Description:
Chemical mapping of a 177-nucleotide RNA with 2A3 and DMS. The RNA was probed in 150 mM KOAc, 10 mM MgCl2 and 150 mM bicine (pH 8.5) at 24 C. It was measured as part of the RMDB library M2PK90. For 2A3, 1,870 sequencing reads were counted. 2A3 adducts were read by reverse transcription with SuperScript II with manganese.

RNA sequence: GGGAACGACUCGAGUAGAGUCGAAAAAGAAAGGUAUAUCAAAGAUCGAAAGAUCAACAAUGCUCGAUAGAUAUACAUCCCAAAUGAAGUAACAAAUCGAGCUACUUCAACGGAAACGACAAAAAAACAACUAACUUCUGUUCGCAGAAGUUAGUUGAAAAGAAACAACAACAACAAC
Reactivity to 2A3 in 0.01 (KOAc 150mM, MgCl2 10mM, bicine 150mM(pH8.5), 24C), signal-to-noise 2, nucleotides 027 to 126: a010g080a020a050a030g140g000u010a030u000a000u010c050a120a040a060g000a010u010c000g030a080a060a030g010a000u030c020a010a030c040a050a060u040g000c010u000c000g010a010u020a110g010a020u010a010u010a000c010a010u010c000c000c000a040a000a000u170g000a010a000g010u030a080a070c100a110a110a050u020c000g000a000g020c000u010a020c010u000u020c020a060a020c040g080g050a130a080a040c060g100a040c140a020a090a000a010a030a020a000
Reactivity to DMS in 0.01 (KOAc 150mM, MgCl2 10mM, bicine 150mM(pH8.5), 24C), signal-to-noise 1, nucleotides 027 to 126: a090g030a100a100a060g000g000u000a000u000a000u010c000a130a070a260g010a000u000c000g000a140a080a110g000a010u000c000a090a100c200a120a150u010g000c020u000c040g020a030u030a150g000a000u010a000u000a010c010a120u000c000c000c000a080a130a080u000g000a030a000g000u010a050a260c160a030a050a080u000c010g010a000g000c010u000a170c000u000u000c020a090a290c180g000g000a090a010a060c040g030a050c110a000a000a020a070a130a090a130